[RMDB]
RNA sequence: GGGAACGACUCGAGUAGAGUCGAAAACGGCAUUUCCCCAGCAGCCAUGACCUACCAGGCUGCGGUGCGGCUCGCCGCACAGGUCAUCCCUCAUCGGGCGCGUCCUGCGUCCUUCCACGCCAAUCCAAGACCAUUGCUUCCUUCGGGAAGCAAUGAACAUACGUGGUCAGUUCGCUGACCACGUAUGAAAAGAAACAACAACAACAAC
Reactivity to 2A3 in 0.01 (KOAc 150mM, MgCl2 10mM, bicine 150mM(pH8.5), 24C), signal-to-noise 2, nucleotides 027 to 156: c030g070g020c050a120u000u040u040c000c020c000c010a080g010c020a000g000c010c010a100u100g000a040c000c030u140a210c060c080a010g010g000c030u000g000c010g000g000u010g000c010g000g000c040u080c250g180c040c030g000c000a010c010a010g030g010u000c010a130u110c040c000c020u070c030a150u160c070g000g020g020c020g000c000g040u200c060c100u190g000c000g010u020c000c020u030u010c030c010a060c020g020c010c000a030a010u040c030c020a030a060g080a100c030c000a000u000u010g010c010u010u010c010c010u030u070c100g060g000g000a000a000g000c000a000a000u000g000a020a000
An RNA of 207 nucleotides, treated with 2A3 and read out base by base. The reactions ran in a buffer of 150 mM KOAc, 10 mM MgCl2 and 150 mM bicine (pH 8.5), at 24 C. It was measured as part of the RMDB library M2RFPK.